[RMDB]
RNA sequence: GGGAACGACUCGAGUAGAGUCGAAAAGAAUGAGAAGUACAAGAACAUGGAGAAACUCAACCCCAUUCCUUAUCCAUUUGCAAACAAAUACUUGUUUAGAAUAAAUGACCUAGAAUUCAUUUCAGACAUAGCUAGUACAUUCUCUCUAGCCAAUACAUAUUAUGUGAGAAUUCGUUCUCACAUAAUAAAAAGAAACAACAACAACAAC
Reactivity to DMS in 0.01 (KOAc 150mM, MgCl2 10mM, bicine 150mM(pH8.5), 24C), signal-to-noise 3, nucleotides 027 to 156: g010a100a090u010g010a110g020a080a090g010u000a080c060a060a120g010a070a090c060a030u000g000g010a120g010a130a080a080c120u000c070a080a170c040c010c010c000a130u010u000c030c040u000u000a110u010c020c020a060u000u010u000g020c060a050a100a160c050a070a100a140u000a090c080u010u000g010u000u000u000a080g000a080a060u000a020a040a100u000g020a060c110c050u000a080g000a110a090u010u000c030a040u020u000u010c030a060g010a070c040a100u010a030g020c010u000a040g020u010a030c040a060u000u010c110u000c030u000c030u000a040g010c050c010a030a080u000a070c080a110
Reactivity to 2A3 in 0.01 (KOAc 150mM, MgCl2 10mM, bicine 150mM(pH8.5), 24C), signal-to-noise 5, nucleotides 027 to 156: g020a030a070u130g000a010g000a060a040g020u070a030c030a070a030g030a170a000c030a050u060g020g020a050g050a110a110a030c050u060c070a040a090c030c000c010c010a020u060u050c020c000u070u080a080u030c020c020a040u040u080u170g020c030a040a070a060c020a050a140a070u150a140c050u040u040g020u030u100u050a040g020a050a030u110a130a070a060u070g020a020c010c030u050a060g100a120a080u100u040c020a020u030u070u070c020a020g020a040c020a050u080a020g010c010u020a010g030u050a030c010a180u110u020c020u010c000u030c010u050a010g040c000c060a060a100u180a100c020a020
Chemical mapping of a 207-nucleotide RNA with DMS and 2A3. The reactions ran in a buffer of 150 mM KOAc, 10 mM MgCl2 and 150 mM bicine (pH 8.5), at 24 C. Source: RMDB library OK3TST, as collected in RNAgym. The DMS profile rests on 5,835 reads. 2A3 adducts were read by reverse transcription with SuperScript II with manganese.